[RMDB]
RNA sequence: GGGAACGACUCGAGUAGAGUCGAAAAUAACUCACGAUGCUGGAACUUUGCGGCCCUAAGCACUGGAGAUGACCCUUGAGGGAGGUUUCACUCUGCAGAGAUCUCUCCCCCGUCGCGUGGCGGGUGGGAUGCUGUCUAGGUUCGCCUAGACAGCAUCAAAAGAAACAACAACAACAAC
Reactivity to DMS in 0.01 (KOAc 150mM, MgCl2 10mM, bicine 150mM(pH8.5), 24C), signal-to-noise 2, nucleotides 027 to 126: u040a090a130c080u000c030a130c130g010a070u000g000c030u000g020g010a070a090c040u000u020u000g010c070g000g010c050c020c050u000a070a080g010c050a080c050u040g000g010a020g000a040u010g000a120c150c030c020u010u020g040a120g000g000g030a120g020g030u000u000u010c010a040c030u010c020u000g000c040a060g010a070g000a060u020c040u000c030u000c000c000c010c000c000g030u000c010g000c300g040u030g000g020c040g000g000g000u020g010g010
Reactivity to 2A3 in 0.01 (KOAc 150mM, MgCl2 10mM, bicine 150mM(pH8.5), 24C), signal-to-noise 4, nucleotides 027 to 126: u190a040a000c020u010c020a090c050g060a020u060g000c020u040g050g040a060a030c010u030u020u100g050c020g020g000c030c000c000u070a090a070g010c010a020c030u070g050g030a050g020a070u080g140a080c010c010c000u010u100g100a150g030g000g010a050g010g020u010u030u000c040a060c060u070c030u070g000c070a010g040a010g000a090u010c010u000c000u000c000c000c000c000c000g010u000c020g020c150g190u230g010g000c030g000g000g020u160g030g020
Structure probing data (DMS and 2A3) for a 177-nucleotide construct. DMS adducts were read by reverse transcription with MarathonRT.